Source information:
The data come from the RNA Mapping Database (RMDB), library OK3TST. This 207-nucleotide RNA was probed chemically with 2A3. For 2A3 the reverse transcriptase was SuperScript II with manganese.
RNA sequence: GGGAACGACUCGAGUAGAGUCGAAAAUACCUGAAUACCAGGGCUAGUUCCCAGCCCCGAAUGGCUCUUGGGAAAGGGGUGAAUGAGGAACUGAGGGAAAGCUCACUCUCACCGCCAGCCUCUGGGAUCCUAGAUCCUAGUUACAGAACUCCGUGUCACCACUUCUACGGUUCGCCGUAGAAGUGGUAAAAGAAACAACAACAACAAC
Reactivity to 2A3 in 0.01 (KOAc 150mM, MgCl2 10mM, bicine 150mM(pH8.5), 24C), signal-to-noise 1, nucleotides 027 to 156: u120a050c000c010u030g050a050a070u210a190c070c000a070g010g000g010c070u040a010g030u000u010c010c010c010a010g000c000c030c000c030g050a030a040u090g000g020c030u050c030u100u140g040g020g020a120a050a000g120g050g000g010u030g030a070a100u190g000a020g060g010a090a040c060u060g030a060g000g060g150a060a160a050g060c010u010c010a030c000u000c000u000c000a020c000c050g150c060c040a020g000c000c010u010c000u010g000g000g010a000u020c050c040u070a060g020a070u080c010c000u020a010g050u120u120a070c020a090g050a110a010c050u000c150c130g070u070g080u210c100